[RMDB]
RNA sequence: GGGAACGACUCGAGUAGAGUCGAAAAACGUCACUACGGUGACGAAUCACUGCUGACAGUCAGUAGUUGGUCUGGGGUAAGCAGGAAAUCUCAGAUCAUCUCUUGACUGUGGAUGGUGUAGGGGAAACACCCUUACCUUUUUCGAAAGGUAAGGGUGAAAAGAAACAACAACAACAAC
Reactivity to 2A3 in 0.01 (KOAc 150mM, MgCl2 10mM, bicine 150mM(pH8.5), 24C), signal-to-noise 6, nucleotides 027 to 126: a000c000g000u000c000a000c000u050a020c260g110g000u010g000a000c000g000a020a020u040c020a020c060u090g030c040u160g160a010c000a010g000u000c000a000g000u020a000g000u090u010g020g000u010c000u000g000g000g020g030u070a150a070g110c100a070g230g090a080a190a030u020c000u000c000a000g000a000u010c000a010u000c010u000c000u030u080g000a000c010u000g000u000g020g030a150u110g010g020u020g020u060a070g000g000g000g070a000a090a010
Reactivity to DMS in 0.01 (KOAc 150mM, MgCl2 10mM, bicine 150mM(pH8.5), 24C), signal-to-noise 8, nucleotides 027 to 126: a070c010g000u000c000a000c000u000a100c180g040g000u000g000a010c000g000a050a050u010c040a060c020u000g010c100u020g010a030c010a010g000u000c000a010g000u000a010g010u000u000g010g010u000c000u000g000g000g000g010u000a070a140g020c140a130g020g010a080a120a020u000c000u000c000a000g000a010u000c000a010u000c000u000c030u000u000g000a010c000u000g010u000g000g010a060u020g010g020u000g010u000a050g000g000g000g000a130a070a170